Chemical mapping of a 177-nucleotide RNA with 2A3. For 2A3, 290 sequencing reads were counted.
RNA sequence: GGGAACGACUCGAGUAGAGUCGAAAAUUGUUUUUAUUUGGUUUUAUUUGAUCUUUGUUUGCUGUUAGCUUCAAAGAUAUGAGUUGGAAUUAAACAGCAUGAAUAUUAGCGGUACAAAGUAGAGUGAGACUCAUACUGCUUUCGAGCAGUAUGAGUCAAAAGAAACAACAACAACAAC
Reactivity to 2A3 in 0.01 (KOAc 150mM, MgCl2 10mM, bicine 150mM(pH8.5), 24C), signal-to-noise 1, nucleotides 027 to 126: u000u060g100u000u000u000u060u090a110u250u000u000g300g040u000u060u000u000a080u000u120u060g000a000u200c040u030u050u050g040u030u030u030g070c000u030g120u100u060a000g000c000u000u080c000a000a000a300g060a000u080a180u080g100a140g040u140u000g080g000a130a080u000u000a300a100a000c000a000g150c000a090u060g100a180a120u050a140u210u240a020g000c000g070g020u120a180c080a000a080a000g060u060a000g000a000g000u000g000a120